This 177-nucleotide RNA was probed chemically with 2A3 and DMS. DMS adducts were read by reverse transcription with MarathonRT. The RNA was probed in 150 mM KOAc, 10 mM MgCl2 and 150 mM bicine (pH 8.5) at 24 C.
RNA sequence: GGGAACGACUCGAGUAGAGUCGAAAAACGGGCAGUGGCGAUGGCAACGCGGCAGCCGCAGGGUCGACUUCUUCGCAGCCGCAACAGACGGGUCACGGGCAAAGAGGGGCGCUCGUUCUGUUGGAAGAUUAUGGAUCAUUUUCGAAUGAUCCAUAAUAAAAGAAACAACAACAACAAC
Reactivity to 2A3 in 0.01 (KOAc 150mM, MgCl2 10mM, bicine 150mM(pH8.5), 24C), signal-to-noise 9, nucleotides 027 to 126: a000c040g010g020g000c030a050g030u060g070g020c040g070a100u070g040g020c030a060a030c060g000c010g060g000c020a020g040c030c020g000c020a020g030g030g010u070c030g040a070c030u060u030c010u040u040c060g000c050a020g020c010c020g020c010a010a020c010a010g040a010c010g000g010g010u060c060a020c060g020g020g000c070a090a090a020g060a060g000g010g010g000c020g000c020u020c010g030u100u020c020u020g020u010u010g010g020a060a030g040
Reactivity to DMS in 0.01 (KOAc 150mM, MgCl2 10mM, bicine 150mM(pH8.5), 24C), signal-to-noise 8, nucleotides 027 to 126: a110c100g010g000g010c050a060g010u010g010g000c030g010a090u030g010g010c060a060a080c120g020c010g000g030c050a070g010c050c040g020c080a070g000g010g010u010c070g010a080c080u000u010c040u010u010c070g020c050a090g020c030c030g000c030a050a060c080a070g000a070c030g000g000g010u010c060a090c090g000g000g010c070a040a070a100g010a100g010g000g000g010c090g010c030u000c020g010u010u010c030u000g000u010u000g000g010a060a070g000